[RMDB]
RNA sequence: GGGAACGACUCGAGUAGAGUCGAAAACUCUGACGCUUCGGCGUCAGAGAAACCUCUAUGCAGAUUGGCGAGGACGACGCUGCGGAGCGCGUUUGCCAACAAAAACGCAUAGAUUCGUCUAUGCGAAGGACAUAUAUAUCUUCGGAUAUAUAUGUCCAAAAGAAACAACAACAACAAC
Reactivity to DMS in 0.01 (KOAc 150mM, MgCl2 10mM, bicine 150mM(pH8.5), 24C), signal-to-noise 7, nucleotides 027 to 126: c000u000c000u000g000a010c010g020c000u000u010c180g030g020c010g010u000c000a010g010a020g000a020a080a110c040c010u000c150u010a080u010g020c120a110g000a160u000u000g010g010c020g010a110g020g010a070c020g000a120c010g010c010u000g010c300g010g000a030g010c010g010c010g010u000u000u000g010c020c000a020a020c110a030a050a050a120a170c030g000c000a000u000a010g000a020u000u010c150g010u000c010u000a000u000g000c000g010a060a080
Reactivity to 2A3 in 0.01 (KOAc 150mM, MgCl2 10mM, bicine 150mM(pH8.5), 24C), signal-to-noise 9, nucleotides 027 to 126: c000u000c000u000g010a000c000g020c020u040u070c240g140g000c000g000u000c000a000g000a000g000a000a000a000c010c000u010c090u140a180u200g130c050a050g220a300u040u050g030g000c030g050a080g110g030a060c020g030a090c000g030c020u150g090c090g160g210a040g000c030g000c010g000u010u020u090g020c010c010a010a000c030a010a090a010a010a010c020g000c000a000u000a000g010a010u010u030c110g050u000c010u010a010u010g000c010g060a080a070
This 177-nucleotide RNA was probed chemically with DMS and 2A3. For 2A3 the reverse transcriptase was SuperScript II with manganese.